[RMDB]
RNA sequence: GGGAACGACUCGAGUAGAGUCGAAAACCUAGUUUCGACUAGGAAUUUAGGGGUCGCUCGACAUGGCAUACCUUUUGACGCUCUGAAGCCUCCACGGAGCGAUAAGGAUGCCAACAGCGAGCGACGGAGGCACCCAGGACUAGACAUUCGUGUCUAAGUGUAUAAUACCAUUCGUGGUAUUAUACACAAAAGAAACAACAACAACAAC
Reactivity to DMS in 0.01 (KOAc 150mM, MgCl2 10mM, bicine 150mM(pH8.5), 24C), signal-to-noise 3, nucleotides 027 to 156: c010c000u010a040g000u000u010u010c150g030a170c040u010a100g020g020a060a090u000u000u000a100g000g010g040g040u000c020g030c010u000c020g000a070c080a300u010g000g020c000a050u000a170c000c020u000u000u030u010g010a240c040g020c000u000c010u010g000a040a100g010c020c010u000c030c040a300c050g020g000a020g020c010g010a090u000a020a030g010g000a080u000g010c020c000a040a050c060a190g000c010g000a050g020c010g010a010c000g020g000a080g060g050c030a250c010c020c030a300g000g010a160c080u000a070g010a050c030a140u000u020c210g040u000g000u000c000u000a040a280
Reactivity to 2A3 in 0.01 (KOAc 150mM, MgCl2 10mM, bicine 150mM(pH8.5), 24C), signal-to-noise 9, nucleotides 027 to 156: c010c000u000a010g000u020u120u080c210g090a040c020u030a020g010g100a120a090u160u150u210a150g000g000g030g020u010c010g010c010u000c010g160a200c130a070u080g010g000c030a050u300a300c020c020u120u080u070u110g170a100c020g000c000u020c000u000g110a130a050g040c020c020u040c030c010a030c010g000g000a010g000c000g000a000u020a020a010g000g000a010u030g000c000c010a020a010c030a020g070c000g000a000g000c000g000a000c010g000g010a000g000g020c030a050c010c010c010a030g060g070a060c080u070a030g010a010c000a050u110u110c220g070u100g010u040c020u040a130a090

An RNA of 207 nucleotides, treated with DMS and 2A3 and read out base by base.
2A3 adducts were read by reverse transcription with SuperScript II with manganese.
The RNA was probed in 150 mM KOAc, 10 mM MgCl2 and 150 mM bicine (pH 8.5) at 24 C.